[RMDB]
RNA sequence: GGGAACGACUCGAGUAGAGUCGAAAACAUCUUUCCUCCCUACACAGUGAAUCCAGCUUGGGAGGGGCAGGGCUAGGCUGAGCCAGCACUCCCUGUGGUGUCUGCCUGCCACGUGCAGCUCUGGAGUAAAACCUGGAGAAGUUCGCUUCUCCAGGAACACUCAUCAAAACUUCGGUUUUGAUGAGUGAAAAGAAACAACAACAACAAC
Reactivity to 2A3 in 0.01 (KOAc 150mM, MgCl2 10mM, bicine 150mM(pH8.5), 24C), signal-to-noise 2, nucleotides 027 to 156: c030a120u090c060u030u110u090c020c000u050c000c000c030u150a060c200a020c040a060g060u050g140a070a030u030c030c010a030g000c050u050u050g010g000g010a020g000g000g020g000c010a010g000g020g000c030u220a040g010g010c010u020g020a040g180c080c020a000g020c010a010c020u040c000c030c050u040g050u100g000g030u030g050u020c020u010g020c010c000u040g030c000c020a110c130g150u130g010c020a040g000c010u020c010u020g040g010a020g020u050a030a060a040a030c000c000u000g000g000a010g000a020a010g000u030u100c200g040c150u000u000c000u000c000c000a010g000g000a000a000
Reactivity to DMS in 0.01 (KOAc 150mM, MgCl2 10mM, bicine 150mM(pH8.5), 24C), signal-to-noise 1, nucleotides 027 to 156: c060a050u020c060u010u010u010c040c020u000c030c010c000u010a180c110a150c080a060g000u010g000a070a100u020c050c030a170g000c020u000u000g010g000g020a110g010g000g020g040c040a080g060g020g050c040u010a100g070g010c040u000g010a170g000c000c040a120g050c030a040c070u000c020c040c040u000g010u000g060g060u000g030u020c040u010g010c080c030u000g010c010c030a070c080g020u000g020c070a110g020c060u010c050u030g000g000a220g010u010a050a100a100a180c020c020u020g030g000a010g000a020a020g000u010u010c300g000c020u000u000c010u010c000c000a000g000g010a040a050